[RMDB]
RNA sequence: GGGAACGACUCGAGUAGAGUCGAAAAGUACGUACUGGCCGCGCGAUCAGUAUCAGUACGAUCAUGUCACGCUGAUCACGGUACAUGGUACACUAGGAUCGGCCGCGAUGAUCGAUCGAUCGAUCGAUGACUUUAAUGUAUUCGUACAUUAAAGUCAAAAAGAAACAACAACAACAAC
Reactivity to 2A3 in 0.01 (KOAc 150mM, MgCl2 10mM, bicine 150mM(pH8.5), 24C), signal-to-noise 9, nucleotides 027 to 126: g020u030a020c050g010u000a020c020u030g040g000c020c020g120c040g020c060g080a080u030c020a020g020u050a020u090c060a020g020u040a030c010g000a030u060c030a040u100g100u080c040a010c090g000c020u010g010a010u010c020a020c100g030g000u030a060c070a190u160g050g020u060a030c080a050c110u100a070g140g070a020u010c000g010g030c040c020g030c040g080a120u140g020a040u040c020g010a030u030c030g050a100u080c050g010a010u010c010g040a080
Reactivity to DMS in 0.01 (KOAc 150mM, MgCl2 10mM, bicine 150mM(pH8.5), 24C), signal-to-noise 9, nucleotides 027 to 126: g010u000a050c060g020u000a030c040u000g010g010c050c030g020c150g010c080g010a040u000c010a060g010u000a030u000c080a110g010u000a050c020g010a080u000c060a050u000g010u000c080a160c150g000c020u000g010a030u000c020a190c110g010g000u000a020c020a110u010g020g010u000a040c070a090c130u000a120g010g000a030u000c010g010g010c040c030g020c120g000a070u010g000a050u000c010g000a070u000c040g000a080u000c100g000a030u000c020g010a130